[RMDB]
RNA sequence: GGGAACGACUCGAGUAGAGUCGAAAAACACAAGGGAGGAAUUGGUGACAAUUGGCGCAGAUCCUGCGUUGGGGCGACCACCCCAGGUUCUGGAAGCAUCUGAAAUCUACAGGGAGCUGCAGGAGUCGCUAUGACGCAAAUUCGUUUGCGUCAUAGCAAAAGAAACAACAACAACAAC
Reactivity to DMS in 0.01 (KOAc 150mM, MgCl2 10mM, bicine 150mM(pH8.5), 24C), signal-to-noise 2, nucleotides 027 to 126: a080c130a140c160a060a070g010g000g010a060g000g020a070a100u010u000g000g000u000g020a060c070a050a110u010u020g030g010c040g020c020a070g000a110u000c070c030u000g000c140g010u000u010g020g010g000g020c070g010a130c150c090a090c020c020c050c000a060g000g000u000u000c020u020g000g000a110a110g020c070a070u010c080u010g010a070a020a080u000c050u010a050c090a090g000g000g010a070g000c020u010g020c020a070g000g000a170g000u000c150
Reactivity to 2A3 in 0.01 (KOAc 150mM, MgCl2 10mM, bicine 150mM(pH8.5), 24C), signal-to-noise 1, nucleotides 027 to 126: a040c050a010c030a030a090g070g000g000a050g000g020a070a050u100u070g010g000u020g040a010c020a020a120u030u070g040g000c000g000c020a010g090a200u050c020c030u030g020c000g030u030u090g000g000g030g030c040g020a030c000c030a000c010c000c010c010a000g060g010u060u010c020u080g060g020a100a000g000c010a030u050c010u020g070a110a110a130u040c050u110a050c010a040g060g020g000a020g050c020u060g000c040a010g000g010a040g030u100c030

The data come from the RNA Mapping Database (RMDB), library OK2TRN. The record gives the reactivity of an RNA of 177 nucleotides to DMS and 2A3. For DMS the reverse transcriptase was MarathonRT. The DMS profile rests on 1,336 reads. The RNA was probed in 150 mM KOAc, 10 mM MgCl2 and 150 mM bicine (pH 8.5) at 24 C. For 2A3 the reverse transcriptase was SuperScript II with manganese.